[RMDB]
RNA sequence: GGGAACGACUCGAGUAGAGUCGAAAAAAAUGACAGGGUGCAAAAAUUCAUACACCAACUUUCUGAGGAACUCUACGAAAUAAGACUACAGCAUCUAGAGUUAUCAAAGCUGAAGCAGGAACACCCUAGUGUCAGUUUCACCAAGGAGGAAGUGUUAUCGAAAUACUUUAUUCGUAAAGUAUUUCGAAAAAGAAACAACAACAACAAC
Reactivity to 2A3 in 0.01 (KOAc 150mM, MgCl2 10mM, bicine 150mM(pH8.5), 24C), signal-to-noise 2, nucleotides 027 to 156: a000a000a040u050g010a000c020a020g030g020g010u020g020c010a010a070a090a110a110u140u160c080a060u110a170c020a050c050c000a070a040c020u070u110u110c100u090g040a050g030g100a010a000c000u000c000u000a020c120g040a020a050a210u150a110a130g040a040c070u150a040c210a100g050c020a030u030c030u010a000g000a000g010u010u030a080u110c030a030a050a000g020c010u030g010a040a010g030c050a040g010g040a040a010c000a010c000c000c000u020a010g060u000g030u070c010a020g010u010u090u040c090a140c040c020a040a050g030g000a030g020g050a100a080g030u030g000u080u130a070
Reactivity to DMS in 0.01 (KOAc 150mM, MgCl2 10mM, bicine 150mM(pH8.5), 24C), signal-to-noise 2, nucleotides 027 to 156: a030a050a030u010g000a070c050a060g020g020g010u000g060c010a010a120a040a090a110u000u000c020a110u000a040c000a080c000c000a040a040c030u000u000u000c100u010g020a150g000g030a010a030c010u010c010u010a130c080g010a070a100a120u010a120a090g010a110c050u000a100c060a100g030c090a070u000c020u010a040g010a070g020u000u000a050u010c010a010a030a060g050c010u030g000a070a050g010c010a040g010g020a090a110c010a020c010c000c020u000a090g010u010g000u000c000a110g000u000u000u010c040a090c040c030a040a120g020g010a090g010g010a070a070g030u000g010u000u000a140